This 177-nucleotide RNA was probed chemically with 2A3 and DMS. The 2A3 profile rests on 681 reads. DMS adducts were read by reverse transcription with MarathonRT.
[RMDB]
RNA sequence: GGGAACGACUCGAGUAGAGUCGAAAAACUCUGUGAGCCUACCGACGUGCAGAACAGUCGCGUCCCUUGUGAAGAGCGCUGUAAAGGAUGGGCUACGGGAUAUGGCAAAGAACCCAGUCCUGAAAGGAUGUGACAAAUCCUUCGGGAUUUGUCACAUAAAAGAAACAACAACAACAAC
Reactivity to 2A3 in 0.01 (KOAc 150mM, MgCl2 10mM, bicine 150mM(pH8.5), 24C), signal-to-noise 1, nucleotides 027 to 126: a010c030u020c030u000g060u000g180a010g000c000c020u030a010c040c000g090a080c030g100u260g110c140a000g020a100a020c000a000g100u150c060g050c030g040u010c000c010c000u160u260g110u050g060a080a050g060a000g080c020g000c000u010g030u030a010a060a060g100g030a050u140g000g030g000c030u000a030c050g020g000g000a020u150a230u080g050g000c130a290a130a050g040a030a140c020c030c000a040g040u030c000c000u000g000a090a000a060g180g050
Reactivity to DMS in 0.01 (KOAc 150mM, MgCl2 10mM, bicine 150mM(pH8.5), 24C), signal-to-noise 2, nucleotides 027 to 126: a110c040u010c020u020g000u010g020a060g020c000c000u000a100c030c000g010a150c130g000u000g020c160a070g010a130a100c030a030g030u000c110g020c060g010u010c000c010c180u000u000g020u000g030a040a100g000a170g010c040g010c010u000g000u010a100a110a110g040g000a070u000g020g010g010c010u000a090c030g010g020g010a060u000a060u010g000g050c060a090a120a200g010a080a220c050c000c020a070g010u000c000c000u000g000a090a040a040g000g000